[RMDB]
This 177-nucleotide RNA was probed chemically with DMS and 2A3. DMS adducts were read by reverse transcription with MarathonRT. It was measured as part of the RMDB library OK1LIB. The reactions ran in a buffer of 150 mM KOAc, 10 mM MgCl2 and 150 mM bicine (pH 8.5), at 24 C. Values cover nucleotides 27 to 126.
RNA sequence: GGGAACGACUCGAGUAGAGUCGAAAAAGAAAGUUUUGAAGCGAAUAAUCAAAACUAGCUUCACUCCUCCUCCGAAGAGCCAUUUCACCUGUUCGAGUGGCAGAUUCAUUGAAAAGAGAAUUUUGAGGCGAGUAUAAUGAUUCGUCAUUAUACUCGCAAAAGAAACAACAACAACAAC
Reactivity to DMS in 0.01 (KOAc 150mM, MgCl2 10mM, bicine 150mM(pH8.5), 24C), signal-to-noise 3, nucleotides 027 to 126: a040g000a060a020a060g010u000u000u000u000g010a060a170g070c160g010a090a040u030a110a150u000c030a050a010a020a020c010u010a080g010c020u000u030c100a120c090u000c020c010u000c010c000u010c020c030g030a040a100g000a170g010c020c040a070u000u020u010c020a090c100c120u020g000u010u020c050g000a020g050u000g000g000c030a040g000a140u040u010c020a210u000u060g000a030a100a070a090g000a110g000a100a110u000u000u010u000g010a230g010
Reactivity to 2A3 in 0.01 (KOAc 150mM, MgCl2 10mM, bicine 150mM(pH8.5), 24C), signal-to-noise 4, nucleotides 027 to 126: a000g060a000a030a000g010u010u010u010u040g010a030a020g060c060g100a110a100u150a140a080u140c040a010a020a020a020c000u010a000g020c000u030u010c020a030c050u000c000c000u000c000c000u050c010c020g040a030a010g000a020g080c000c010a060u160u180u030c010a050c010c070u060g120u160u090c050g040a020g030u030g000g000c010a010g020a080u060u050c020a020u060u260g120a020a040a050a000g110a010g070a070a130u130u090u060u130g040a060g040
Record summary:
For 2A3 the reverse transcriptase was SuperScript II with manganese.